This 207-nucleotide RNA was probed chemically with DMS and 2A3. Conditions: 150 mM KOAc, 10 mM MgCl2 and 150 mM bicine (pH 8.5), 24 C. For 2A3, 3,546 sequencing reads were counted. It was measured as part of the RMDB library RNAMAK.
RNA sequence: GGGAACGACUCGAGUAGAGUCGAAAAUCCUAAGUCGACUUGGAUUUAAGGGUGUAAACUGUUGUGUAGCUUAAUCGGAAACGAUUAAGCGCAGAUACAACAGGAAGAAGCCCUUUGUCAGUCGAUAUGGAAAAAGACGACACUUCGGUGUCGUCAACGAUCGUAAAUAGUUCGCUAUUUACGAUCGAAAAGAAACAACAACAACAAC
Reactivity to DMS in 0.01 (KOAc 150mM, MgCl2 10mM, bicine 150mM(pH8.5), 24C), signal-to-noise 2, nucleotides 027 to 156: u000c000c000u000a040a160g010u000c000g000a020c000u000u000g070g030a060u000u000u000a040a040g020g000g000u040g030u000a030a280a300c020u000g000u000u000g010u010g040u000a290g010c020u000u010a020a000u010c000g020g000a160a200a150c000g010a030u010u000a000a020g050c070g030c040a000g000a070u000a030c000a020a020c000a060g050g010a000a160g010a230a300g000c000c000c000u010u000u000g010u020c020a050g000u000c030g020a060u000a180u000g000g000a090a080a030a110a120g000a060c000g030a030c000a010c000u000u000c300g120g000u010g000u000c000g020u000c000a000a050
Reactivity to 2A3 in 0.01 (KOAc 150mM, MgCl2 10mM, bicine 150mM(pH8.5), 24C), signal-to-noise 2, nucleotides 027 to 156: u030c020c000u050a130a030g020u000c000g010a020c010u080u180g180g010a080u300u240u110a070a010g000g000g010u170g000u080a000a000a000c010u000g000u010u000g000u010g020u050a030g000c010u000u000a000a000u010c020g030g030a080a070a070c000g000a000u000u000a000a000g000c020g000c020a000g020a070u070a030c000a000a000c000a010g000g010a000a100g000a010a000g000c010c020c010u000u000u000g000u010c000a000g000u000c000g000a010u000a080u060g030g020a030a100a020a050a070g000a000c010g000a000c000a010c020u070u150c300g080g000u010g010u010c000g000u000c000a000a000